[RMDB]
RNA sequence: GGGAACGACUCGAGUAGAGUCGAAAAGAUAUGGACCUUGUAGUUGCUACACUACCCACCUCGGAAACGAGAGGUGUAGGCACUCUAUGGGUCCUAAGUCAAAGUGCGCCUGUUCGCAGGCGCACAACUACCGGUUUAUGUUCGCAUAAACCGGUAGAAAAGAAACAACAACAACAAC
Reactivity to DMS in 0.01 (KOAc 150mM, MgCl2 10mM, bicine 150mM(pH8.5), 24C), signal-to-noise 2, nucleotides 027 to 126: g010a050u000a300u000g000g000a040c000c000u010u000g020u000a010g010u000u010g030c010u000a030c020a040c000u000a050c050c070c090a300c100c010u010c010g000g010a110a090a210c010g000a020g000a090g010g010u000g000u000a020g010g000c010a050c100u010c060u000a060u000g000g000g000u000c000c000u000a010a080g000u000c050a100a130a140g020u000g000c010g010c000c000u000g000u010u020c230g000c000a000g000g010c000g000c010a000c000a010a060
Reactivity to 2A3 in 0.01 (KOAc 150mM, MgCl2 10mM, bicine 150mM(pH8.5), 24C), signal-to-noise 2, nucleotides 027 to 126: g020a000u030a040u140g010g000a000c030c000u070u300g110u090a030g000u080u110g060c020u010a050c030a010c040u130a110c030c070c020a100c000c020u000c000g000g060a100a080a050c020g000a010g020a020g000g000u010g020u010a080g070g200c040a010c050u100c040u050a160u150g010g040g000u000c000c010u050a130a010g060u000c060a130a090a030g020u000g020c000g050c000c020u020g060u060u110c300g010c070a000g000g000c010g020c000a010c000a000a010